[RMDB]
RNA sequence: GGGAACGACUCGAGUAGAGUCGAAAACGCAACACAGUGAGUGGACGGAACAAAUCCCCUUCCCACCUCCCCACUGUCCACUCACUGUCUUCCUAAGAGGAAAUAUAAAUCGGGGGUGGGAAGGGGAAGCCGGAUCCAUAUUCGUAUGGAUCCGGCUAAAAGAAACAACAACAACAAC
Reactivity to 2A3 in 0.01 (KOAc 150mM, MgCl2 10mM, bicine 150mM(pH8.5), 24C), signal-to-noise 1, nucleotides 027 to 126: c200g140c020a000a070c030a000c000a060g000u000g000a000g000u000g000g000a000c030g010g000a120a000c010a160a060a080u110c000c050c000c000u000u000c020c000c000a000c000c000u000c010c040c050c090a180c070u050g000u010c000c000a000c000u000c000a000c000u000g000u030c000u040u020c000c000u030a000a100g060a040g200g210a150a030a000u250a070u060a040a120a020u170c080g070g000g000g000g000u000g000g000g040a000a000g000g000g010g000a000